An RNA of 207 nucleotides, treated with 2A3 and DMS and read out base by base.
The DMS profile rests on 2,983 reads.
For 2A3, 3,025 sequencing reads were counted.
Conditions: 150 mM KOAc, 10 mM MgCl2 and 150 mM bicine (pH 8.5), 24 C.
For DMS the reverse transcriptase was MarathonRT.
RNA sequence: GGGAACGACUCGAGUAGAGUCGAAAAGCUUCCGUCGAACGCGAAAGUCGGACGGCGGCCAUGAGUCGCAACGAAAAGCCGCGGCAAGUGGAGUUAGCGAGAAGAGACUAGGCUUUGGUUUCUUCAAAUUAGUGAGUGUGGUUCGCCACACUCACAAGAGUAUAUUCUGGUUCGCCAGAAUAUACUCAAAAGAAACAACAACAACAAC
Reactivity to 2A3 in 0.01 (KOAc 150mM, MgCl2 10mM, bicine 150mM(pH8.5), 24C), signal-to-noise 3, nucleotides 027 to 156: g010c000u040u020c000c000g010u000c000g010a020a020c010g050c020g150a300a120a080g150u300c010g010g000a020c000g000g000c000g000g010c000c000a040u010g000a010g010u020c010g020c030a040a090c080g220a070a110a090a040g100c110c080g000c000g000g000c010a030a050g010u000g010g020a060g020u080u060a050g070c070g050a070g020a170a020g060a020g000a010c020u020a020g010g060c000u060u010u040g030g000u000u020u000c000u060u040c020a050a080a150u140u060a030g000u000g000a000g000u000g000u010g000g040u040u040c120g070c070c000a000c000a000c000u010c000a000c000a000a000
Reactivity to DMS in 0.01 (KOAc 150mM, MgCl2 10mM, bicine 150mM(pH8.5), 24C), signal-to-noise 2, nucleotides 027 to 156: g010c010u000u000c000c010g030u000c000g000a050a160c070g020c040g000a140a140a170g030u000c020g020g000a300c000g000g000c010g000g010c000c010a050u010g010a300g030u000c010g010c000a050a110c000g000a140a090a150a190g040c110c030g040c020g010g000c000a080a270g000u000g000g000a190g010u000u000a070g020c010g040a150g010a050a050g010a050g000a010c010u000a080g000g000c070u000u000u000g030g010u000u000u000c000u000u000c020a060a070a060u000u000a150g010u000g000a040g020u000g040u000g000g000u000u000c250g040c040c000a020c000a000c000u010c000a000c000a020a060